[RMDB]
RNA sequence: GGGAACGACUCGAGUAGAGUCGAAAACGGUCGAAAUUCGUUUCGACCGAAUAUGCUAGCUGAGCACAGCUGCAAUGCUAUGCUGAAAGCCAGCUGCAAGCGCGAGUUCGGCGUUCGCGCCGAACAAGCAAGGUAUGUCUUUCGAGACAUACCUUGCAAAAGAAACAACAACAACAAC
Reactivity to 2A3 in 0.01 (KOAc 150mM, MgCl2 10mM, bicine 150mM(pH8.5), 24C), signal-to-noise 4, nucleotides 027 to 126: c000g010g020u000c000g000a000a020a020u130u070c190g060u040u020u010c000g000a000c010c010g010a000a010u110a020u030g020c070u080a020g010c000u010g030a010g010c010a020c010a160g000c010u040g010c090a100a070u190g030c020u060a040u190g000c010u000g050a130a020a000g020c000c000a000g000c010u030g010c040a060a070g090c110g020c040g120a090g060u000u010c000g000g010c020g010u010u050c220g000c000g000c030c000g010a000a000c010a000a010
Reactivity to DMS in 0.01 (KOAc 150mM, MgCl2 10mM, bicine 150mM(pH8.5), 24C), signal-to-noise 4, nucleotides 027 to 126: c010g010g010u000c000g010a010a020a030u000u010c210g020u000u000u000c000g000a010c000c000g010a020a030u000a060u010g000c010u000a030g010c000u000g010a060g010c000a030c030a010g030c000u000g010c260a100a080u020g010c030u000a020u010g010c010u010g000a080a120a050g010c040c010a010g010c000u000g010c100a070a130g010c140g000c080g000a210g010u000u000c010g010g020c000g010u000u010c140g010c010g000c000c000g000a000a000c000a050a110
This 177-nucleotide RNA was probed chemically with 2A3 and DMS. The reactions ran in a buffer of 150 mM KOAc, 10 mM MgCl2 and 150 mM bicine (pH 8.5), at 24 C. In probing experiments dimethyl sulfate is read out at A N1 and C N3, which are open when not base-paired.